An RNA of 207 nucleotides, treated with 2A3 and DMS and read out base by base. 2A3 adducts were read by reverse transcription with SuperScript II with manganese. The RNA was probed in 150 mM KOAc, 10 mM MgCl2 and 150 mM bicine (pH 8.5) at 24 C.
[RMDB]
RNA sequence: GGGAACGACUCGAGUAGAGUCGAAAAUUUACAGAGUCCAUGCUUGUGUAAGCUGUGCUGUCAGUAACAGUAGGUACUGCCCGCCUUAGCCCAUGCCCACGUCCCCAGAGGCGUCCACUUUCAACCCUUGUAGCUGCUCUUUGAGGAUACCUUCAUGUCACAGAAAGAAAUUCGUUUCUUUCUGUGAAAAAGAAACAACAACAACAAC
Reactivity to 2A3 in 0.01 (KOAc 150mM, MgCl2 10mM, bicine 150mM(pH8.5), 24C), signal-to-noise 5, nucleotides 027 to 156: u080u060u030a040c020a030g040a010g050u030c070c010a080u110g020c010u140u070g070u020g030u130a050a050g010c030u020g050u070g040c000u030g060u130c040a050g030u050a070a080c020a050g110u120a050g020g060u040a050c020u040g000c020c010c000g010c010c020u040u090a020g010c010c020c020a040u090g000c020c010c010a050c030g020u050c010c010c010c010a030g020a050g030g010c010g020u030c050c010a050c030u070u180u120c030a060a070c040c000c000u030u060g050u050a030g000c040u060g010c010u030c000u070u030u070g020a020g000g020a020u060a060c060c000u050u120c080a060u170g030
Reactivity to DMS in 0.01 (KOAc 150mM, MgCl2 10mM, bicine 150mM(pH8.5), 24C), signal-to-noise 2, nucleotides 027 to 156: u010u000u010a100c070a150g000a090g030u010c030c060a140u010g010c030u010u020g040u010g000u000a060a100g010c010u010g010u000g020c020u010g010u020c030a190g020u020a110a140c050a080g030u010a120g040g030u000a080c040u000g010c000c000c010g020c020c020u000u000a100g000c010c010c020a100u000g010c010c000c020a090c030g000u000c010c010c030c000a100g000a090g000g030c020g000u010c020c010a060c050u000u000u000c030a070a160c020c020c020u000u000g020u010a070g010c010u000g010c010u010c030u000u020u000g010a120g010g020a110u000a070c070c010u000u000c040a100u000g000